Chemical mapping of a 177-nucleotide RNA with 2A3. The 2A3 profile rests on 997 reads. Values are in units of 0.01, from 0 to 300, in steps of 10. The RNA was probed in 150 mM KOAc, 10 mM MgCl2 and 150 mM bicine (pH 8.5) at 24 C.
RNA sequence: GGGAACGACUCGAGUAGAGUCGAAAACCAGACCGUUACCGUAUCUGCGUUCGGUCUGGGGCACAGCAACGCAGAUACGGUAAGCUGUGCCACGACGGUGGACAUGCGAAAGCAUGUCCAUCGUCGAGCUCGUUCAUGGCUUCGGCCAUGAACGAGCAAAAGAAACAACAACAACAAC
Reactivity to 2A3 in 0.01 (KOAc 150mM, MgCl2 10mM, bicine 150mM(pH8.5), 24C), signal-to-noise 1, nucleotides 027 to 126: c020c000a000g030a000c040c000g100u080u000a000c010c010g000u020a020u000c000u020g000c000g000u050u080c130g050g200u050c020u050g000g020g120g040c150a000c020a100g030c020a000a000c000g030c010a020g000a030u000a000c000g000g000u000a000a000g010c020u090g010u080g110c080c050a100c020g030a000c000g010g010u000g000g000a000c000a000u010g000c000g030a140a110a030g000c000a000u000g000u000c010c000a000u000c000g000u000c000g000a000